[RMDB]
RNA sequence: GGGAACGACUCGAGUAGAGUCGAAAAUCCUGUGCUCUGCCAUUGCUCAGGUGAGUGAGCAGUUCGCCCGGCACAUUGACCAGCAGAUCCAGGGCAGCCGGAUCGGUGGAGCCCAGGAAAUGGAGAGGAAUCAGUGUUCUUUCGAGAACACUGAUUCAAAAGAAACAACAACAACAAC
Reactivity to DMS in 0.01 (KOAc 150mM, MgCl2 10mM, bicine 150mM(pH8.5), 24C), signal-to-noise 3, nucleotides 027 to 126: u000c010c000u000g000u000g010c010u010c020u000g000c010c020a100u000u000g010c000u000c020a070g000g010u010g020a160g030u000g000a020g010c000a030g000u010u000c140g000c110c040c110g010g010c030a120c180a110u010u020g000a040c030c020a240g010c040a090g000a050u010c020c020a090g000g000g000c100a070g030c040c040g030g000a030u000c080g020g030u000g010g000a020g000c010c010c010a010g030g000a030a040a090u000g020g010a150g010a170g020
Reactivity to 2A3 in 0.01 (KOAc 150mM, MgCl2 10mM, bicine 150mM(pH8.5), 24C), signal-to-noise 2, nucleotides 027 to 126: u010c000c000u000g000u000g000c000u000c000u010g010c010c010a120u060u060g000c000u020c030a060g140g060u140g150a170g190u040g010a010g050c000a010g000u050u100c060g050c030c030c000g010g000c010a030c020a120u040u180g070a110c000c020a020g080c040a030g020a120u010c030c020a030g030g090g060c010a000g000c010c020g020g030a070u050c050g000g000u000g000g030a000g000c000c020c010a000g030g030a020a040a070u130g060g030a110g020a010g050
The data come from the RNA Mapping Database (RMDB), library OK2TRN. An RNA of 177 nucleotides, treated with DMS and 2A3 and read out base by base. Reactivities are rounded to 0.1 and cut off at 0 and 3. The reactions ran in a buffer of 150 mM KOAc, 10 mM MgCl2 and 150 mM bicine (pH 8.5), at 24 C.